[RMDB]
RNA sequence: GGGAACGACUCGAGUAGAGUCGAAAACGACGGGCAACUGUGGCUCGACUUCGGCGGCCAGCCGGUGCCGGUGGUGGACGCCCGGCCCAUCUGGGGGCACGCGCCGCAGGAUACGGACACCGAAGCGCAGAAACUAUGAAUUCGUUCAUAGUUUCUGAAAAGAAACAACAACAACAAC
Reactivity to 2A3 in 0.01 (KOAc 150mM, MgCl2 10mM, bicine 150mM(pH8.5), 24C), signal-to-noise 7, nucleotides 027 to 126: c030g090a020c030g010g030g010c040a140a020c060u040g020u050g060g010c030u030c030g090a090c070u140u090c040g020g000c010g010g000c010c010a030g030c040c030g080g050u150g110c110c020g040g000u050g030g160u060g030g050a040c040g020c020c030c000g020g000c000c010c000a080u130c110u170g190g000g000g020g000c040a030c060g020c010g010c000c000g000c010a010g000g020a020u080a100c040g010g020a020c020a010c050c020g030a050a010g040c060g000
Reactivity to DMS in 0.01 (KOAc 150mM, MgCl2 10mM, bicine 150mM(pH8.5), 24C), signal-to-noise 9, nucleotides 027 to 126: c110g010a130c050g010g010g010c040a090a130c060u000g020u000g010g010c020u000c030g010a110c120u010u010c110g010g010c020g010g000c020c030a120g010c050c030g010g020u000g010c100c010g010g020u000g010g020u000g010g010a080c060g010c040c020c070g010g010c030c020c020a090u010c120u010g000g010g000g000g010c040a150c070g010c140g010c010c010g000c030a050g000g000a150u010a060c100g000g000a100c080a120c010c010g010a070a100g010c170g010
An RNA of 177 nucleotides, treated with 2A3 and DMS and read out base by base. For DMS, 18,908 sequencing reads were counted. The 2A3 profile rests on 14,889 reads.